[RMDB]
RNA sequence: GGGAACGACUCGAGUAGAGUCGAAAAAAGGUCAUUUCAAAGAGGUCUUGUGAGGCUGUGAAACCAAGAGCUCUUAACACUGCGACCAAAGAUGGAAGUUCUCUAUAGGAUGCCAUGGCAUUUGAUGGUGCUAUGUUUUCUUGAGGAGAUAUAAGAAGUAAUACCUCCUGUUCGCAGGAGGUAUUACAAAAGAAACAACAACAACAAC
Reactivity to 2A3 in 0.01 (KOAc 150mM, MgCl2 10mM, bicine 150mM(pH8.5), 24C), signal-to-noise 2, nucleotides 027 to 156: a050a000g020g020u060c070a100u080u150u190c140a090a050a010g020a030g040g070u000c000u000u060g020u080g060a070g090g020c140u100g070u120g130a100a060a020c040c010a010a000g000a040g030c000u010c000u020u020a070a040c030a040c130u160g000c090g000a000c010c000a040a060a000g070a020u080g010g020a090a040g080u100u000c020u000c030u020a020u040a060g000g030a000u000g060c050c000a000u000g000g000c020a030u020u060u190g180a110u250g050g010u010g010c000u000a000u000g010u000u040u000u000c020u010u030g050a070g050g000a000g010a010u070a000u050a070a070g120a160a040
Reactivity to DMS in 0.01 (KOAc 150mM, MgCl2 10mM, bicine 150mM(pH8.5), 24C), signal-to-noise 1, nucleotides 027 to 156: a040a080g000g000u010c010a180u000u020u000c090a120a070a180g010a060g040g020u000c040u010u000g000u010g020a170g020g000c000u000g020u020g000a130a120a160c070c040a090a090g030a110g020c010u020c040u000u000a060a140c160a050c060u020g000c070g020a000c000c010a130a110a110g000a180u010g020g000a110a070g020u000u000c010u010c050u010a210u010a080g010g000a050u000g010c260c000a040u020g000g000c000a020u010u000u000g050a270u000g000g000u010g010c020u000a050u010g010u010u000u000u030c040u010u000g030a130g000g020a030g040a080u000a100u010a070a190g010a160a160